Structure probing data (2A3 and DMS) for a 207-nucleotide construct. Values cover nucleotides 27 to 156. It was measured as part of the RMDB library OK3TST. DMS adducts were read by reverse transcription with MarathonRT. The 2A3 profile rests on 715 reads.
[RMDB]
RNA sequence: GGGAACGACUCGAGUAGAGUCGAAAAAAGCUGAGCACAAAGUACAUGUCUGCAUUGCUCCCUAUGCUGUGCACUAGGCAGCUUGUGUCAUUAUACCUAGCUGAGAAGCUUGGUAAUGGAAAUGUGUCUGAUUACUGGCUAUAUGAACCAUUGAGUCAUCUUUAGACCUCUUCGGAGGUCUAAAGAUAAAAGAAACAACAACAACAAC
Reactivity to 2A3 in 0.01 (KOAc 150mM, MgCl2 10mM, bicine 150mM(pH8.5), 24C), signal-to-noise 1, nucleotides 027 to 156: a000a000g000c010u040g040a030g030c010a010c010a020a010a010g000u010a000c020a020u100g030u060c060u070g020c010a010u020u140g000c000u050c040c000c000u010a020u090g020c130u250g160u160g050c000a040c130u040a030g020g000c000a000g000c000u010u070g010u010g040u050c010a000u000u230a040u050a100c000c000u010a000g000c000u060g000a050g000a120a000g000c000u010u010g010g000u010a000a040u010g000g020a000a060a000u030g030u010g050u140c040u070g010a100u020u220a050c080u090g030g000c030u030a010u040a010u180g050a050a070c010c050a030u100u160g050a060g020u090c030
Reactivity to DMS in 0.01 (KOAc 150mM, MgCl2 10mM, bicine 150mM(pH8.5), 24C), signal-to-noise 1, nucleotides 027 to 156: a010a050g030c010u000g020a290g000c000a040c000a050a050a110g030u000a060c010a130u000g010u000c040u000g010c000a120u000u020g010c020u000c130c080c050u010a040u000g020c010u000g020u000g000c030a050c030u000a040g030g060c010a280g000c040u000u000g000u000g000u000c070a110u000u000a210u030a020c030c000u020a070g000c010u010g050a210g000a230a070g010c000u010u010g040g010u000a050a070u010g010g010a110a300a090u000g010u000g000u020c010u010g010a060u000u010a100c120u000g030g020c010u000a110u000a120u010g010a060a050c030c000a180u000u010g010a210g000u020c140